[RMDB]
The record gives the reactivity of an RNA of 177 nucleotides to DMS and 2A3. The 2A3 profile rests on 712 reads. For DMS the reverse transcriptase was MarathonRT. Reactivities are rounded to 0.1 and cut off at 0 and 3. It was measured as part of the RMDB library OK2TST. For DMS, 529 sequencing reads were counted. 2A3 is a SHAPE reagent: it acylates the 2'-hydroxyl of flexible nucleotides of all four kinds.
RNA sequence: GGGAACGACUCGAGUAGAGUCGAAAAUCAAUUGUUCAGCUAAAGCUAAACGCUUUGGUUUCCGAUAUGAGCCUGGUGUAGGCGUUAAAAGUGGAAGUUCAACAACCACGCCACAUAACACCCAAUAGCACAGUGCGUUAUUCGUAACGCACUGUGCAAAAGAAACAACAACAACAAC
Reactivity to DMS in 0.01 (KOAc 150mM, MgCl2 10mM, bicine 150mM(pH8.5), 24C), signal-to-noise 1, nucleotides 027 to 126: u000c000a000a040u010u000g000u000u000c070a030g020c000u020a070a020a060g000c000u000a050a050a070c120g000c050u000u000u020g000g000u000u000u000c300c010g000a050u000a100u000g000a020g060c030c000u000g010g050u000g010u000a010g000g000c030g030u000u000a020a060a050a050g050u000g000g000a110a220g040u000u010c100a150a220c130a070a210c100c130a000c100g000c040c060a020c040a120u000a050a040c060a130c020c050c120a150a090u020a100
Reactivity to 2A3 in 0.01 (KOAc 150mM, MgCl2 10mM, bicine 150mM(pH8.5), 24C), signal-to-noise 1, nucleotides 027 to 126: u050c000a000a060u100u040g020u070u130c000a020g040c000u020a070a000a000g000c010u080a290a140a020c090g030c000u000u000u020g000g010u010u050u000c030c030g010a010u070a300u280g040a000g050c000c060u060g010g000u000g030u090a110g030g050c030g050u030u010a090a010a060a030g020u020g010g080a020a170g050u300u190c100a140a130c010a010a010c050c000a000c000g030c030c000a060c020a030u200a100a020c010a030c010c060c000a190a080u050a200